This 177-nucleotide RNA was probed chemically with DMS and 2A3.
For DMS, 32,401 sequencing reads were counted.
2A3 is a SHAPE reagent: it acylates the 2'-hydroxyl of flexible nucleotides of all four kinds.
For DMS the reverse transcriptase was MarathonRT.
The RNA was probed in 150 mM KOAc, 10 mM MgCl2 and 150 mM bicine (pH 8.5) at 24 C.
For 2A3 the reverse transcriptase was SuperScript II with manganese.
[RMDB]
RNA sequence: GGGAACGACUCGAGUAGAGUCGAAAAUGCUGGAAAGGGAUUGUAGAGAUGCAUUCCCCAGUGUCGCAAAUUAGAUUGUAUAUGGUUACGUGCGACAGAUACUGGUGAGGCCGGGCUUCUCGAAGAAGGGUAUAUAUAACUUCGGUUAUAUAUACCCAAAAGAAACAACAACAACAAC
Reactivity to DMS in 0.01 (KOAc 150mM, MgCl2 10mM, bicine 150mM(pH8.5), 24C), signal-to-noise 8, nucleotides 027 to 126: u020g020c020u000g000g010a050a060a080g010g000g000a070u010u010g010u000a040g000a110g000a120u000g000c030a080u010u000c020c040c000c040a030g010u010g010u010c010g010c010a030a060a100u040u020a090g010a120u010u010g010u020a080u040a080u030g010g010u010u010a060c260g020u010g010c000g000a020c010a090g010a130u030a070c020u000g000g010u000g010a090g000g000c020c060g010g000g000c030u000u000c000u000c010g000a070a090g000a120a130
Reactivity to 2A3 in 0.01 (KOAc 150mM, MgCl2 10mM, bicine 150mM(pH8.5), 24C), signal-to-noise 5, nucleotides 027 to 126: u090g010c010u060g030g050a120a080a100g090g000g010a050u090u110g050u050a020g010a000g030a080u050g030c010a040u020u030c000c020c000c020a030g020u020g000u020c010g010c030a000a070a110u150u100a130g130a270u130u170g090u120a110u050a060u250g240g020u130u080a040c050g030u040g010c010g000a010c010a000g020a010u210a070c010u020g020g010u050g040a050g030g010c010c000g000g020g000c020u010u000c020u000c030g020a040a020g060a070a060